An RNA of 177 nucleotides, treated with 2A3 and read out base by base. Source: RMDB library OK1LIB, as collected in RNAgym. For 2A3, 1,669 sequencing reads were counted. The RNA was probed in 150 mM KOAc, 10 mM MgCl2 and 150 mM bicine (pH 8.5) at 24 C.
[RMDB]
RNA sequence: GGGAACGACUCGAGUAGAGUCGAAAAAGCGCUAGAUAUGUACAUGGGUGUUCCCCCUUAUCUGUGUACUAUAUCUGUUUGGACUUGCGUGAUAGGGGGAGUAGUGCAAGUUUGGGUGGUGCGCGAAGUGUAUAUUAUUUUUCGAAAUAAUAUACACAAAAGAAACAACAACAACAAC
Reactivity to 2A3 in 0.01 (KOAc 150mM, MgCl2 10mM, bicine 150mM(pH8.5), 24C), signal-to-noise 2, nucleotides 027 to 126: a000g020c020g030c030u040a000g000a010u050a000u020g010u010a000c000a020u040g030g000g000u170g030u040u030c000c000c000c000c000u090u130a080u250c000u020g030u010g010u000a010c040u040a010u000a000u000c020u020g260u140u160u150g000g000a030c000u000u030g000c000g000u000g050a110u070a060g000g000g000g000g000a000g000u010a000g000u000g010c020a010a000g000u020u010u030g050g020g030u230g030g030u150g040c010g010c030g060a110a050